[RMDB]
About this RNA: The record gives the reactivity of an RNA of 177 nucleotides to DMS and 2A3. It was measured as part of the RMDB library OK2TRN. The RNA was probed in 150 mM KOAc, 10 mM MgCl2 and 150 mM bicine (pH 8.5) at 24 C.

RNA sequence: GGGAACGACUCGAGUAGAGUCGAAAAACGAGCCCUCAUCAUGUUGGGGGACACUAUGUCUGGUAGAAUAGGAGGACAGAUCCACCUAGCCAUCAUGGCAGUGUUCAAGAUGUCACCAGGAUACGUGUAUGCACCCAAUGUUCGCAUUGGGUGCAUAAAAAGAAACAACAACAACAAC
Reactivity to DMS in 0.01 (KOAc 150mM, MgCl2 10mM, bicine 150mM(pH8.5), 24C), signal-to-noise 2, nucleotides 027 to 126: a100c060g000a110g000c000c000c010u000c010a060u000c220a140u020g010u020u000g010g010g000g010g000a050c010a020c030u000a040u000g020u010c010u010g000g020u010a090g020a050a160u000a070g010g020a110g050g010a120c200a090g020a130u000c030c020a050c020c020u000a070g000c150c000a070u000c100a070u000g000g020c020a120g000u010g020u000u000c070a010a060g020a080u000g000u000c030a060c020c050a010g020g010a020u000a080c180g020u000g000
Reactivity to 2A3 in 0.01 (KOAc 150mM, MgCl2 10mM, bicine 150mM(pH8.5), 24C), signal-to-noise 2, nucleotides 027 to 126: a000c080g000a000g070c050c000c000u000c000a060u000c010a040u180g220u260u080g060g000g010g000g040a020c000a000c000u070a050u130g180u020c000u000g000g000u090a130g070a160a120u080a070g080g020a020g000g000a020c060a120g170a140u040c040c020a020c030c000u010a040g010c010c000a040u070c070a120u150g000g000c070a200g140u080g040u300u030c040a110a000g020a070u140g000u110c010a000c020c020a020g050g030a040u010a030c070g000u010g020